RNA sequence: GGGAACGACUCGAGUAGAGUCGAAAACUUAGGUGCGAGUGCAGGCGCUCCGUGUACACUCGCACACAACAGCAGGCAAGCACCGGAGUCGCUGCACUCUCUCAAUAUACAUAAAGAGAAAGAGUGCAAUCGGCGAUGAUUUCGAUCAUCGCCGAUUAAAAGAAACAACAACAACAAC
Reactivity to 2A3 in 0.01 (KOAc 150mM, MgCl2 10mM, bicine 150mM(pH8.5), 24C), signal-to-noise 1, nucleotides 027 to 126: c020u070u060a050g270g000u000g000c030g000a000g090u040g150c000a050g050g000c000g020c000u110c010c030g080u200g110u230a010c000a000c030u000c000g110c060a000c050a000c000a060a000c000a000g050c000a000g120g040c170a070a010g000c050a060c000c000g000g130a000g000u100c020g000c050u000g000c000a000c000u000c000u050c000u000c000a000a130u090a000u100a100c030a020u200a030a230a060g060a000g000a000a300a070g000a000g000u010g000c020
Reactivity to DMS in 0.01 (KOAc 150mM, MgCl2 10mM, bicine 150mM(pH8.5), 24C), signal-to-noise 1, nucleotides 027 to 126: c000u000u070a100g050g000u000g000c000g000a010g000u000g000c300a190g040g000c090g000c000u000c000c000g120u000g000u000a200c010a000c000u060c000g110c000a060c000a010c300a100a070c300a000g010c000a000g030g000c300a000a100g000c000a100c070c030g000g000a000g000u090c100g000c000u040g000c000a000c000u000c000u010c000u000c000a070a160u000a060u000a120c280a090u060a060a000a300g000a010g000a090a120a100g000a000g070u000g000c070

Conditions: 150 mM KOAc, 10 mM MgCl2 and 150 mM bicine (pH 8.5), 24 C. This 177-nucleotide RNA was probed chemically with 2A3 and DMS. For DMS, 685 sequencing reads were counted. Values cover nucleotides 27 to 126.